The record gives the reactivity of an RNA of 177 nucleotides to 2A3 and DMS.
2A3 adducts were read by reverse transcription with SuperScript II with manganese.
The reactions ran in a buffer of 150 mM KOAc, 10 mM MgCl2 and 150 mM bicine (pH 8.5), at 24 C.
For DMS, 2,593 sequencing reads were counted.
[RMDB]
RNA sequence: GGGAACGACUCGAGUAGAGUCGAAAAGAGUGACAGUGAGAGUGACUCUGACUCAGUCUCAGAGUGUCACACUCACAGUGUCUCUCACACUGUGACACUGUGUCAGAGUCAGACAGACUGAGACAGAGUCCUUGGUUCGUUUCGACGAACCAAGGACAAAAGAAACAACAACAACAAC
Reactivity to 2A3 in 0.01 (KOAc 150mM, MgCl2 10mM, bicine 150mM(pH8.5), 24C), signal-to-noise 2, nucleotides 027 to 126: g120a010g080u090g040a000c040a060g030u070g110a130g000a000g090u110g040a020c010u020c000u020g020a030c020u010c070a030g010u000c010u020c050a030g010a020g050u060g050u060c020a010c010a010c180u030c030a080c020a000g010u000g000u020c060u040c010u040c050a030c010a000c040u160g020u040g070a000c020a000c050u010g010u010g000u060c040a010g000a010g150u030c010a000g030a030c020a010g040a010c020u030g010a000g020a020c010a000g080a020
Reactivity to DMS in 0.01 (KOAc 150mM, MgCl2 10mM, bicine 150mM(pH8.5), 24C), signal-to-noise 3, nucleotides 027 to 126: g010a110g020u000g010a110c080a070g010u000g000a160g000a130g010u000g000a030c010u000c000u000g010a090c010u000c010a040g000u010c030u020c070a070g000a090g010u000g010u000c030a020c050a070c090u010c080a030c080a010g000u000g000u000c170u020c160u000c140a160c060a030c090u010g010u000g000a010c090a030c070u000g010u000g000u000c030a050g010a080g000u000c080a060g010a120c210a080g010a050c000u000g010a030g020a120c030a080g000a110